[RMDB]
RNA sequence: GGGAACGACUCGAGUAGAGUCGAAAAAUCCUCAGGUUCAUAAGCGUGAUGAUUGGGUGUUCAUGCUCCAUGCAUGAGAUGUGCCUCCUUUGAACCUUGUUACGACCUUGGCACAUUACCCAUCUGAAAAAGACGUUCGCGUUCGCGCGAACGUCAACUAUGCUAUCUGGUUCGCCAGAUAGCAUAGAAAAGAAACAACAACAACAAC
Reactivity to DMS in 0.01 (KOAc 150mM, MgCl2 10mM, bicine 150mM(pH8.5), 24C), signal-to-noise 2, nucleotides 027 to 156: a090u000c010c010u000c060a040g000g010u000u010c000a060u010a040a060g010c120g000u020g000a190u010g020a050u010u010g020g000g000u000g000u000u010c000a000u010g000c010u000c170c160a190u000g000c000a030u000g010a070g000a040u000g020u010g000c000c000u010c140c030u000u000u020g010a010a040c030c010u010u020g000u000u010a170c150g020a130c120c090u000u000g010g080c010a030c000a060u000u010a030c010c020c020a070u000c010u000g000a040a090a110a100a140g020a040c000g050u000u000c000g050c020g040u010u000c300g060c000g040c020g020a020a000c020g050u000c000a010a070
Reactivity to 2A3 in 0.01 (KOAc 150mM, MgCl2 10mM, bicine 150mM(pH8.5), 24C), signal-to-noise 4, nucleotides 027 to 156: a000u030c000c000u010c000a010g010g020u000u000c010a020u080a260a060g030c090g150u110g120a120u050g000a040u170u280g030g010g010u070g060u040u010c000a000u000g000c000u090c220c070a120u260g000c000a000u000g010a010g000a030u010g000u000g000c000c000u010c020c000u020u010u010g010a010a010c000c010u010u070g060u020u080a100c110g070a110c040c050u060u090g000g000c010a000c000a010u030u150a020c000c010c010a000u000c000u030g070a040a000a030a050a050g010a000c000g000u000u000c000g000c000g020u030u040c190g000c000g000c000g090a000a000c000g000u000c000a000a000